[RMDB]
RNA sequence: GGGAACGACUCGAGUAGAGUCGAAAACACUAUUCAUCCGUGCGCCGAGCUCAUCGUCUCAAUUUUCCCAGCGAUGACCGAGGAAUGGAGGAAAGAGCAUUUGAUCGCCGAGAUUUGUGGAGAAGACGAACUUGGCACUUUUCGAAGUGCCAAGUUCAAAAGAAACAACAACAACAAC
Reactivity to 2A3 in 0.01 (KOAc 150mM, MgCl2 10mM, bicine 150mM(pH8.5), 24C), signal-to-noise 1, nucleotides 027 to 126: c030a040c020u160a100u100u060c010a080u010c080c000g000u030g030c090g020c020c010g000a050g000c000u000c010a030u020c010g110u060c000u010c120a120a150u050u100u040u010c000c000c000a010g030c020g070a000u040g070a050c020c000g010a040g060g050a050a030u080g000g050a020g000g000a070a130a040g070a030g040c060a030u050u100u200g050a040u060c030g000c040c010g050a030g030a130u050u110u090g080u070g010g060a100g030a080a030g040a010c060
Reactivity to DMS in 0.01 (KOAc 150mM, MgCl2 10mM, bicine 150mM(pH8.5), 24C), signal-to-noise 1, nucleotides 027 to 126: c160a090c220u000a120u040u000c080a110u000c060c030g030u040g000c060g020c040c020g000a120g000c260u010c010a040u000c020g020u000c110u020c160a080a050u000u000u000u000c000c020c000a220g000c020g020a040u010g000a090c080c020g050a100g000g030a220a060u000g000g010a060g000g000a020a070a100g010a080g070c090a050u000u000u010g010a090u000c060g010c020c050g020a120g010a060u000u010u000g040u020g000g000a070g020a070a050g010a130c170